[RMDB]
RNA sequence: GGGAACGACUCGAGUAGAGUCGAAAAACCAUGCUGCCUUCCACUGGUUAAGACCUCCGAGAGCGAAGGCCUGCAGAGGCAGAGGAAGUCCCUCUGCCGCCCCCAGAGGGGCAGCACUGUGUUGGCCGAACUUGGGUAAGUUCGCUUACCCAAGUUCAAAAGAAACAACAACAACAAC
Reactivity to DMS in 0.01 (KOAc 150mM, MgCl2 10mM, bicine 150mM(pH8.5), 24C), signal-to-noise 3, nucleotides 027 to 126: a050c030c000a220u020g010c000u000g000c000c000u070u020c020c020a180c010u000g000g000u020u010a130a070g030a050c000c000u000c000c010g030a280g010a180g000c060g010a070a010g000g010c000c000u000g000c200a130g000a090g000g000c000a000g000a030g030g010a180a180g030u010c180c000c020u010c000u000g010c000c020g000c090c060c260c010c010a020g000a160g010g000g000g030c010a000g000c000a070c100u000g000u010g010u010u000g000g000c190c080
Reactivity to 2A3 in 0.01 (KOAc 150mM, MgCl2 10mM, bicine 150mM(pH8.5), 24C), signal-to-noise 6, nucleotides 027 to 126: a000c010c000a000u020g000c010u010g010c010c010u180u280c110c030a110c040u000g010g050u080u150a100a010g020a050c020c000u020c020c040g140a130g030a030g190c040g040a080a020g020g010c000c000u050g010c030a040g050a110g090g000c010a000g000a010g020g030a100a060g150u140c040c000c000u000c000u000g010c000c000g000c000c000c000c000c000a010g020a030g000g000g000g000c000a000g030c000a010c030u040g030u010g010u070u040g070g030c080c090
The record gives the reactivity of an RNA of 177 nucleotides to DMS and 2A3. The RNA was probed in 150 mM KOAc, 10 mM MgCl2 and 150 mM bicine (pH 8.5) at 24 C. For DMS the reverse transcriptase was MarathonRT. For 2A3 the reverse transcriptase was SuperScript II with manganese.